[RMDB]
An RNA of 177 nucleotides, treated with DMS and 2A3 and read out base by base.
Source: RMDB library OK2TRN, as collected in RNAgym.
The reactions ran in a buffer of 150 mM KOAc, 10 mM MgCl2 and 150 mM bicine (pH 8.5), at 24 C.
Reactivities are given for positions 27 through 126.

RNA sequence: GGGAACGACUCGAGUAGAGUCGAAAAGAACGAGGCCAGCAAGGUGCCCUCGCUGUCCAUGUGGUUCCACGACAUGCGCCCCUUCUACUCCUGCUGCUACUGGCAGGAGGAGCAGGCGGUGGGCUGAAGGUCGACUAUAUUUCGAUAUAGUCGACCUAAAAGAAACAACAACAACAAC
Reactivity to DMS in 0.01 (KOAc 150mM, MgCl2 10mM, bicine 150mM(pH8.5), 24C), signal-to-noise 2, nucleotides 027 to 126: g000a070a060c040g000a070g040g000c070c010a040g020c030a070a040g000g020u010g020c220c040c010u000c030g010c020u000g000u000c000c020a090u000g010u000g000g010u000u000c010c020a090c150g020a100c070a070u000g000c070g010c000c020c010c000u000u000c010u000a050c010u000c010c000u000g000c010u000g010c120u010a130c270u010g010g020c000a010g000g000a000g010g000a010g000c050a030g000g000c160g010g020u020g000g020g020c010u020g010a200
Reactivity to 2A3 in 0.01 (KOAc 150mM, MgCl2 10mM, bicine 150mM(pH8.5), 24C), signal-to-noise 1, nucleotides 027 to 126: g030a030a010c020g020a040g030g020c010c030a010g070c060a170a050g120g050u130g100c020c020c000u010c000g000c030u010g000u000c050c050a080u120g000u070g020g100u030u030c000c000a050c050g070a020c030a010u160g020c040g050c030c000c000c020u000u000c000u000a000c000u000c010c000u010g050c000u000g010c020u080a170c080u130g090g000c010a010g000g000a010g000g000a010g000c070a040g010g040c110g030g000u040g010g080g020c010u070g060a140